[RMDB]
RNA sequence: GGGAACGACUCGAGUAGAGUCGAAAAGAUAUGGAGAUGUGAGCUCUUUGAUCUUAGGUUUCGGAAACGAAACUAAGGGAGAGCCACAUCUCCUAAGUCAAAAUCUCAUUCGCUUCGGCGAAUGAGAGUACUACCUUGACUUCGGUCAAGGUAGUACAAAAGAAACAACAACAACAAC
Reactivity to DMS in 0.01 (KOAc 150mM, MgCl2 10mM, bicine 150mM(pH8.5), 24C), signal-to-noise 2, nucleotides 027 to 126: g000a010u000a030u020g000g000a040g020a000u000g010u000g010a100g030c000u000c000u000u000u010g000a010u010c000u000u000a060g020g000u000u000u000c000g030g010a010a010a020c010g010a000a010a010c000u000a000a010g000g010g010a020g000a020g010c010c000a000c000a000u000c000u000c000c000u000a000a030g010u000c000a150a110a160a290u000c000u000c000a010u000u000c000g000c000u000u020c280g030g000c000g000a000a000u000g000a030g010a020
Reactivity to 2A3 in 0.01 (KOAc 150mM, MgCl2 10mM, bicine 150mM(pH8.5), 24C), signal-to-noise 3, nucleotides 027 to 126: g020a000u020a000u070g010g010a000g010a000u000g040u020g050a130g040c010u040c000u300u300u040g000a010u030c000u000u030a120g220g000u000u030u000c010g000g000a020a000a000c000g000a010a000a010c010u000a000a000g000g000g010a040g000a010g000c010c000a000c000a000u010c000u000c000c000u000a010a000g000u000c000a000a030a050a270u030c010u000c000a010u000u000c010g000c030u090u130c300g210g000c000g010a000a000u000g000a000g000a000